[RMDB]
Source information
The data come from the RNA Mapping Database (RMDB), library RNAMAK. An RNA of 207 nucleotides, treated with 2A3 and read out base by base. The RNA was probed in 150 mM KOAc, 10 mM MgCl2 and 150 mM bicine (pH 8.5) at 24 C. For 2A3, 984 sequencing reads were counted.
RNA sequence: GGGAACGACUCGAGUAGAGUCGAAAAGCCUCGUUCGCGAGGCCCUGAUCCUAAGUCAAGCGUCACCUUCUCGACGAUCGCAAGUUUCGGAAACGAAAUGAUGACCGAUUAGAGAAGCAAGUCGCUUGAUAUGGAGCGCUUAUAGGUUCGCCUAUAAUCUUGAAGGCUUGUUCGCAAGCCUUCAAGAAAAAGAAACAACAACAACAAC
Reactivity to 2A3 in 0.01 (KOAc 150mM, MgCl2 10mM, bicine 150mM(pH8.5), 24C), signal-to-noise 1, nucleotides 027 to 156: g010c040c000u000c000g020u030u100c290g010c000g110a000g000g000c010c000c000u060g060a070u020c000c000u020a100a070g050u000c000a010a020g000c000g030u030c000a060c150c000u020u020c000u010c030g110a110c210g020a080u040c030g000c060a130a130g010u000u010u000c060g000g000a140a070a050c020g020a030a020a020u150g060a160u200g050a080c060c000g000a030u000u050a100g020a000g010a000a000g000c010a020a120g010u000c000g010c000u010u000g000a000u000a050u050g000g000a040g000c100g050c150u110u040a000u010a020g010g060u070u150c170g060c000c000u030a010u030a010a040